[RMDB]
RNA sequence: GGGAACGACUCGAGUAGAGUCGAAAAAGAAGCUCGUGGAAGGAUGUUUCUCCUAGAUGAGGUGGAACAGCAGGAGGGAGGUCAUGGAGCCACCGCUGGAUACCUGAACAGUGUGCAGAAUGGAGCCUAAUAGGGGAAUUUUCGAAUUCCCCUAUUAAAAAGAAACAACAACAACAAC
Reactivity to 2A3 in 0.01 (KOAc 150mM, MgCl2 10mM, bicine 150mM(pH8.5), 24C), signal-to-noise 1, nucleotides 027 to 126: a010g060a050a030g020c040u030c110g110u120g090g020a040a050g050g040a030u060g030u000u050u010c030u020c010c010u080a130g020a300u180g070a050g000g050u050g020g000a080a030c010a040g080c050a020g030g070a060g050g000g000a030g010g030u050c050a060u090g050g000a010g040c020c010a010c020c000g000c020u030g000g050a050u050a110c020c030u010g020a040a030c020a060g040u020g030u070g070c000a000g030a090a070u160g040g000a030g020c030c000
Reactivity to DMS in 0.01 (KOAc 150mM, MgCl2 10mM, bicine 150mM(pH8.5), 24C), signal-to-noise 5, nucleotides 027 to 126: a100g000a130a130g020c060u000c100g040u010g020g000a120a080g000g000a070u000g010u000u010u000c010u010c010c020u010a160g020a120u010g010a070g020g010u000g020g000a060a060c050a070g020c090a090g000g000a100g010g010g000a070g010g000u000c050a060u010g020g000a120g010c040c040a030c060c060g000c030u000g010g010a070u000a030c020c020u000g000a080a110c190a120g000u000g020u000g000c030a060g010a090a050u000g020g000a280g000c040c100